Structure probing data (DMS and 2A3) for a 207-nucleotide construct. Conditions: 150 mM KOAc, 10 mM MgCl2 and 150 mM bicine (pH 8.5), 24 C. The data come from the RNA Mapping Database (RMDB), library OK3TST.
RNA sequence: GGGAACGACUCGAGUAGAGUCGAAAAGAUCAGCGCCAAACGUGGAAACGCGUGCUCGGAGUUCUCGGAGAUUUCGGAAAGGCGAUGGCACGCCUGGUACGCUUCCAGUAUCUUCCGGUGGAUGUCUUCCAGGUACAACGUCAGGUGAAGAACCUCGGAAGAUACGUUAUUUCGAUAACGUAUCUUCAAAAGAAACAACAACAACAAC
Reactivity to DMS in 0.01 (KOAc 150mM, MgCl2 10mM, bicine 150mM(pH8.5), 24C), signal-to-noise 5, nucleotides 027 to 156: g010a110u000c040a110g030c040g020c020c030a040a070a180c040g030u010g010g020a120a100a110c040g010c020g030u000g000c040u000c060g010g000a230g010u000u000c010u000c050g010g020a100g020a100u000u000u000c040g030g000a070a080a040g000g000c020g010a130u000g010g030c110a130c070g020c010c010u000g000g010u000a070c070g000c050u000u000c020c020a110g020u000a060u000c030u010u010c030c030g010g030u000g010g010a060u000g000u000c030u000u000c000c010a100g020g000u000a080c040a070a090c050g010u000c030a100g020g020u000g000a080a070g020a140a110c020c000u000c030g010
Reactivity to 2A3 in 0.01 (KOAc 150mM, MgCl2 10mM, bicine 150mM(pH8.5), 24C), signal-to-noise 5, nucleotides 027 to 156: g050a090u090c030a020g030c010g010c040c030a090a100a080c040g060u050g030g020a060a050a020c050g010c010g030u050g020c040u050c030g040g010a040g010u050u020c060u050c040g060g010a060g010a070u060u130u110c040g010g040a120a030a030g030g000c030g050a050u090g090g000c070a020c090g010c000c000u010g000g010u030a020c060g000c010u020u010c010c010a040g040u080a100u080c060u120u030c060c030g050g050u050g020g020a080u040g030u040c030u040u000c000c010a010g000g030u080a070c050a050a010c060g050u070c040a030g040g000u030g050a050a050g060a080a030c010c010u030c030g030
High DMS reactivity at an A or C suggests that its Watson-Crick edge is free. The DMS profile rests on 16,723 reads. The 2A3 profile rests on 11,005 reads.